The record gives the reactivity of an RNA of 207 nucleotides to DMS and 2A3. For DMS the reverse transcriptase was MarathonRT. The data come from the RNA Mapping Database (RMDB), library OK3TST. The RNA was probed in 150 mM KOAc, 10 mM MgCl2 and 150 mM bicine (pH 8.5) at 24 C. The DMS profile rests on 7,215 reads.
[RMDB]
RNA sequence: GGGAACGACUCGAGUAGAGUCGAAAAAGACGAUCGCCGACCUGCACAAACAGACCCGUGAUUUCAUGGUCGAGAAGGGCCACGGUGAUCGACUGGAGCACGCCCGGAAAAGAAAGUCUUAGAAACUGUUUGACAUACGUCGCGUGUAUAACCUAUAGCGUUAAUAGAAAUUCGUUUCUAUUAACGCAAAAGAAACAACAACAACAAC
Reactivity to DMS in 0.01 (KOAc 150mM, MgCl2 10mM, bicine 150mM(pH8.5), 24C), signal-to-noise 4, nucleotides 027 to 156: a040g030a200c000g040a030u000c020g030c010c010g000a050c000c010u000g010c080a200c100a120a080a140c060a260g000a020c030c000c060g030u000g010a180u010u010u010c070a100u010g030g030u010c010g010a210g040a290a280g000g010g030c010c090a030c040g110g020u000g000a040u030c000g000a050c040u000g010g030a140g000c040a010c000g040c010c040c000g030g000a080a110a300a210g000a040a070a090g010u020c010u000u000a190g010a150a050a050c030u000g000u000u000u000g010a120c070a180u010a090c060g010u010c040g020c010g060u000g000u000a110u000a070a230c010c000u000a060u000a270
Reactivity to 2A3 in 0.01 (KOAc 150mM, MgCl2 10mM, bicine 150mM(pH8.5), 24C), signal-to-noise 7, nucleotides 027 to 156: a000g040a010c000g000a000u010c010g020c020c000g240a300c050c010u090g000c150a050c080a140a230a060c050a090g020a020c040c090c080g060u080g080a250u080u280u300c110a090u140g000g000u020c030g020a030g040a070a070g010g010g000c080c080a050c020g020g000u000g000a010u010c000g000a000c010u030g030g030a080g000c000a000c010g000c000c030c000g040g020a100a140a010a010g110a030a070a010g040u040c050u130u160a050g150a070a150a060c050u080g120u150u080u120g050a050c030a040u170a020c020g030u030c050g010c010g010u000g010u010a070u070a090a060c020c010u150a100u190a170